[RMDB]
RNA sequence: GGGAACGACUCGAGUAGAGUCGAAAAUUGCGCCUCCGAUUAGCCGUCGGCAUUUCCCCAGCAGCCAUGACCUACCAGGCUGCGGUGCGGCUCGCCGCACAGGUCAUCCCUCAUCGGGCGCGUCCUGGAUAGGGCUAUACUUUCGAGUAUAGCCCAACAGAUACAAACUCUUCGGAGUUUGUAUCUGAAAAGAAACAACAACAACAAC
Reactivity to 2A3 in 0.01 (KOAc 150mM, MgCl2 10mM, bicine 150mM(pH8.5), 24C), signal-to-noise 1, nucleotides 027 to 156: u130u140g030c030g000c000c000u000c080c000g070a100u060u110a000g050c040c010g080u020c030g000g000c040a030u020u010u050c000c020c010c000a020g000c000a000g020c000c010a150u130g020a060c000c040u070a140c110c110a020g000g000c000u000g000c030g010g070u030g000c010g020g000c040u060c210g080c000c000g020c000a000c000a000g000g020u020c050a200u140c030c040c000u090c040a040u020c050g010g000g030c030g040c040g030u050c000c010u010g070g020a120u070a180g020g010g000c010u000a000u000a000c000u060u050u090c190g030a010g000u000a000u000a000g000c000c000c000a000a000
Reactivity to DMS in 0.01 (KOAc 150mM, MgCl2 10mM, bicine 150mM(pH8.5), 24C), signal-to-noise 1, nucleotides 027 to 156: u010u010g020c010g010c010c010u000c010c010g010a160u010u000a020g000c090c090g000u010c020g040g020c070a100u030u010u000c020c020c000c010a100g000c080a050g000c000c010a130u000g000a120c060c050u000a120c140c100a160g010g010c010u060g000c040g030g050u000g000c070g010g050c080u000c230g010c020c000g000c050a080c030a020g040g000u000c050a100u000c020c040c010u010c100a110u000c060g050g000g000c020g000c030g050u000c010c020u000g000g000a250u000a070g020g020g070c010u010a000u000a010c000u000u000u000c250g010a050g060u000a030u000a000g030c000c000c000a000a020